[RMDB]
RNA sequence: GGGAACGACUCGAGUAGAGUCGAAAAGAUAUGGAGUAGGCUAGAUGUCGAUCGGAAACGAUCGAUACAUCUUGGACCCUAACUCCUAAGUCAAAUCAACUUGACAUGUUCGCAUGUCAAGUUGAAAUCAUAAUUUCAACUUCGGUUGAAAUUAUGAAAAAGAAACAACAACAACAAC
Reactivity to 2A3 in 0.01 (KOAc 150mM, MgCl2 10mM, bicine 150mM(pH8.5), 24C), signal-to-noise 4, nucleotides 027 to 126: g040a020u060a050u130g010g000a000g010u000a000g010g010c020u000a000g000a010u010g000u020c000g000a000u000c000g000g030a060a060a040c000g000a000u000c010g020a030u050a030c000a010u000c000u040u110g120g110a230c030c000c000u050a200a180c010u000c000c000u000a120a010g060u030c020a010a030a210u030c000a000a010c000u000u020g000a000c000a010u020g020u050u140c300g000c160a000u010g000u000c000a000a000g000u000u000g000a000a000a000
Reactivity to DMS in 0.01 (KOAc 150mM, MgCl2 10mM, bicine 150mM(pH8.5), 24C), signal-to-noise 7, nucleotides 027 to 126: g000a040u000a300u010g000g010a010g020u000a030g000g000c020u000a010g010a010u000g010u000c000g010a010u000c000g000g000a100a100a200c000g010a010u000c010g000a080u000a040c030a000u000c000u000u010g030g000a130c300c000c020u010a040a060c000u000c000c000u000a030a100g000u000c030a070a110a150u000c000a010a000c000u010u000g000a010c000a000u000g010u000u010c240g010c010a000u000g000u000c000a000a010g000u000u000g000a010a070a090

Structure probing data (2A3 and DMS) for a 177-nucleotide construct. Values cover nucleotides 27 to 126. As a SHAPE reagent, 2A3 marks flexible, mostly unpaired nucleotides at the ribose 2'-OH. For 2A3 the reverse transcriptase was SuperScript II with manganese. It was measured as part of the RMDB library TTRDEL.